[RMDB]
RNA sequence: GGGAACGACUCGAGUAGAGUCGAAAAGAUAUGGAGCUAGAUGCAGCGCCCGCAAUGGUGAGGGUCGUCGGAAACGACGACCUACCCACCACCAUUGCGGGCGAACUACUGCGCUAGCUCCUAAGUCCAAUCUCAUUGAGUUCGCUCAAUGAGAUUGAAAAGAAACAACAACAACAAC
Reactivity to DMS in 0.01 (KOAc 150mM, MgCl2 10mM, bicine 150mM(pH8.5), 24C), signal-to-noise 2, nucleotides 027 to 126: g000a070u010a300u020g010g020a030g030c010u000a010g010a100u000g020c010a020g000c030g010c010c000c020g030c000a010a020u000g000g000u010g030a070g020g000g000u000c000g050u000c000g010g000a100a080a270c000g020a000c000g020a000c000c000u000a000c060c050c130a300c070c010a000c000c010a020u010u010g010c000g000g000g010c020g000a000a010c050u010a300c000u000g000c000g010c010u000a000g000c000u010c000c000u000a020a060g010u000c040
Reactivity to 2A3 in 0.01 (KOAc 150mM, MgCl2 10mM, bicine 150mM(pH8.5), 24C), signal-to-noise 1, nucleotides 027 to 126: g060a080u190a160u300g000g000a000g000c000u010a020g040a300u080g080c000a000g000c010g000c030c000c050g060c000a000a010u090g010g000u010g070a000g000g010g040u000c000g010u000c010g090g000a080a060a030c020g020a030c000g000a000c000c000u010a030c030c030c000a040c000c030a000c010c000a030u010u030g020c000g050g150g000c040g000a000a000c020u150a050c000u010g000c010g030c020u000a000g030c000u000c000c010u000a040a000g000u000c000
Structure probing data (DMS and 2A3) for a 177-nucleotide construct.
High 2A3 reactivity points to a flexible backbone, as in loops and unpaired stretches.
The reactions ran in a buffer of 150 mM KOAc, 10 mM MgCl2 and 150 mM bicine (pH 8.5), at 24 C.
2A3 adducts were read by reverse transcription with SuperScript II with manganese.